[RMDB]
RNA sequence: GGGAACGACUCGAGUAGAGUCGAAAAAAUAAAUACUCAAAACUUACUACUUUCUAAUUAUUUUGCCAUGUUUGAUGUUACGUUUGCUCUUGAGGUUACUCAGGACCAUCGCGUCUCCACGGUGGCAGUACCGCAUAAUGGCAUCCUCCUGUGUGUAAGGUAAUAGGUGGUUCGCCACCUAUUACCUAAAAGAAACAACAACAACAAC
Reactivity to 2A3 in 0.01 (KOAc 150mM, MgCl2 10mM, bicine 150mM(pH8.5), 24C), signal-to-noise 1, nucleotides 027 to 156: a000a000u140a020a000a000u180a140c020u000c060a050a170a080a000c000u110u140a130c010u050a090c020u180u060u090c050u130a080a120u300u150a140u070u150u200u060g000c040c030a030u030g200u070u060u140g110a040u010g000u130u060a000c030g000u000u060u140g030c020u010c030u010u040g000a000g000g090u110u050a060c010u030c010a000g010g010a030c010c000a030u050c030g020c020g060u050c030u000c010c010a010c000g010g010u070g000g060c010a040g000u010a030c000c050g030c120a060u020a070a060u070g000g000c000a070u000c010c010u050c050c020u020g080u100g010u020g030u120a050